[RMDB]
RNA sequence: GGGAACGACUCGAGUAGAGUCGAAAAGGGACUUGGAUUGAUAAAUGCUCAGGACCUGUUAGGCAAAGACACUUAGACACUUGGAUCUAUUUAUGUCUUGGCUUGCAUCUCAGGAAAGAUCAAACUAACUCGUUCACCUAUUCGUAGGUGAACGAGUAAAAGAAACAACAACAACAAC
Reactivity to DMS in 0.01 (KOAc 150mM, MgCl2 10mM, bicine 150mM(pH8.5), 24C), signal-to-noise 3, nucleotides 027 to 126: g050g000g020a120c030u000u000g000g000a110u010u040g000a060u020a100a070a130u030g040c040u010c090a030g010g020a160c030c030u000g010u000u000a030g000g000c020a030a030a030g000a010c000a090c110u000u000a010g000a030c010a220c260u050u040g000g000a090u000c010u000a010u000u010u010a090u030g010u000c000u010u000g000g000c010u020u010g000c100a060u000c030u000c000a120g010g000a060a100a100g000a060u010c030a020a030a100c180u020a060
Reactivity to 2A3 in 0.01 (KOAc 150mM, MgCl2 10mM, bicine 150mM(pH8.5), 24C), signal-to-noise 4, nucleotides 027 to 126: g020g010g030a020c000u010u020g040g020a030u050u120g020a040u160a160a150a080u220g020c030u040c060a010g050g020a050c000c010u000g110u090u090a030g010g030c010a010a000a040g000a020c020a000c020u030u010a000g020a010c030a050c140u160u170g100g020a120u050c000u030a030u010u100u020a150u140g000u000c000u020u000g060g010c000u010u020g010c010a050u000c030u020c040a020g080g090a140a090a030g090a050u050c040a050a020a060c020u070a030

The data come from the RNA Mapping Database (RMDB), library OK1LIB. The record gives the reactivity of an RNA of 177 nucleotides to DMS and 2A3. The reactions ran in a buffer of 150 mM KOAc, 10 mM MgCl2 and 150 mM bicine (pH 8.5), at 24 C. The 2A3 profile rests on 2,988 reads. High DMS reactivity at an A or C suggests that its Watson-Crick edge is free.